[RMDB]
RNA sequence: GGGAACGACUCGAGUAGAGUCGAAAACUACGCGGGAGUGAUAUUAUCGGGCGCUUUGGCGGCGACGAAUUUGCGGUGAUUAUGUGCGGAACGCCGGCAGACAGCGCGAUUACCGCCAUGUCGCGAGGCUAGGAAAAUACUUCGGUAUUUUCCUAGCAAAAGAAACAACAACAACAAC
Reactivity to 2A3 in 0.01 (KOAc 150mM, MgCl2 10mM, bicine 150mM(pH8.5), 24C), signal-to-noise 6, nucleotides 027 to 126: c040u090a040c040g010c020g020g040g030a080g040u060g060a060u030a070u290u100a060u070c020g010g110g000c060g000c000u120u070u100g100g010c010g010g010c010g010a030c010g050a070a190u060u040u140g110c040g010g020u050g060a070u030u220a080u220g090u070g060c000g020g020a050a050c060g030c050c000g070g020c010a010g030a190c050a060g030c020g000c020g010a010u010u050a090c010c020g000c000c010a020u070g020u020c010g020c030g030a060g110
Reactivity to DMS in 0.01 (KOAc 150mM, MgCl2 10mM, bicine 150mM(pH8.5), 24C), signal-to-noise 4, nucleotides 027 to 126: c030u000a120c070g010c030g010g000g000a140g020u000g020a120u030a050u030u030a070u010c040g010g010g020c000g000c090u010u030u010g000g030c050g010g000c070g010a090c100g000a050a060u020u020u010g000c000g010g020u030g010a030u000u030a080u020g010u040g000c020g020g010a060a110c070g010c040c040g000g020c070a050g000a130c120a140g000c050g010c030g000a030u000u010a110c030c000g010c020c120a020u010g000u000c010g010c030g010a100g010